[RMDB]
RNA sequence: GGGAACGACUCGAGUAGAGUCGAAAAGCGAGCUUAUAUGUCAUUCAGGUGACGUGCAUCAAUUCGUCGGGCCACGCGAUGAAGACCCCCAUUGCCUUACUUUAUUUGCGUGCGCUUUAGGCUGUGGCCCCCGGGGUCCAUUCGUGGACCCCGGGGGAAAAGAAACAACAACAACAAC
Reactivity to 2A3 in 0.01 (KOAc 150mM, MgCl2 10mM, bicine 150mM(pH8.5), 24C), signal-to-noise 1, nucleotides 027 to 126: g050c000g020a000g050c060u230u090a100u020a000u270g010u020c020a050u220u050c020a050g070g040u060g030a000c050g040u090g030c000a110u090c070a040a170u150u090c000g020u010c000g000g000g000c000c010a010c000g000c000g000a010u090g030a000a020g040a000c000c050c000c000c010a000u000u220g030c020c020u050u070a030c010u050u040u150a120u020u220u300g020c000g030u060g020c070g000c000u060u040u010a070g000g070c030u000g020u010g170g020
Chemical mapping of a 177-nucleotide RNA with 2A3. Reactivities are given for positions 27 through 126.